[RMDB]
Chemical mapping of a 170-nucleotide RNA with DMS and 2A3. The RNA was probed in 150 mM KOAc, 10 mM MgCl2 and 150 mM bicine (pH 8.5) at 24 C.
RNA sequence: GGGAACGACUCGAGUAGAGUCGAAAAUACAGGAAACUCCUGUUGUGCCUGAUACUGUUGAAGUCCCACCGCAAGUGGUGAAACUUCCGUCUGCACCUCAGACUAUCCAGCCCGAGGUAAAAGAAGUAAAGACUUCGGUUCGCCGAAGUCAAAAGAAACAACAACAACAAC
Reactivity to DMS in 0.01 (KOAc 150mM, MgCl2 10mM, bicine 150mM(pH8.5), 24C), signal-to-noise 6, nucleotides 027 to 129: u030a060c050a010g000g010a050a090a140c250u010c020c000u000g020u000u040g000u000g030c020c040u000g030a070u030a080c040u060g000u040u040g020a070a000g000u000c030c010c000a030c020c020g030c250a090a250g000u030g010g020u010g000a010a030a020c050u000u000c020c050g010u020c040u030g020c300a060c050c020u010c020a030g020a000c030u040a140u050c250c210a040g000c010c000c070g000a040g040g030u030a040a040a080a060g010a040a070g020u020a020a030a010
Reactivity to 2A3 in 0.01 (KOAc 150mM, MgCl2 10mM, bicine 150mM(pH8.5), 24C), signal-to-noise 6, nucleotides 027 to 129: u140a000c050a010g000g100a090a160a050c080u020c020c000u010g000u010u020g030u010g040c020c070u050g000a050u040a180c070u130g170u240u200g010a020a000g030u030c000c000c000a000c000c030g060c170a150a050g030u010g090g010u080g060a060a030a020c000u020u020c040c000g030u010c000u020g000c040a050c020c000u020c000a010g010a060c040u070a050u090c050c050a000g020c010c020c030g030a070g030g110u150a040a070a030a030g210a090a000g020u210a060a080a000